[RMDB]
RNA sequence: GGGAACGACUCGAGUAGAGUCGAAAACAGUCAAGGCUUCGUUCUUCGGACCAUUCUUUCACUUGGCCGAAUUCUUGUCCCUGGAACAGCAGAUUCUUGCCUGGGUGAGCGUACAUGUAGGCAUACAUCCGGUACUCCCAUUCGUGGGAGUACCGGAAAAAGAAACAACAACAACAAC
Reactivity to DMS in 0.01 (KOAc 150mM, MgCl2 10mM, bicine 150mM(pH8.5), 24C), signal-to-noise 1, nucleotides 027 to 126: c060a100g050u000c070a080a170g010g000c060u000u000c120g080u010u010c060u000u000c120g000g010a100c000c010a080u000u020c090u010u000u010c240a120c150u000u000g010g000c010c050g010a070a150u000u020c070u000u000g000u000c000c030c040u000g010g000a150a020c060a080g000c090a040g000a100u000u000c060u020u000g000c090c010u000g010g020g020u010g000a080g000c020g010u050a040c120a040u020g000u000a050g000g010c110a060u000a080c090a040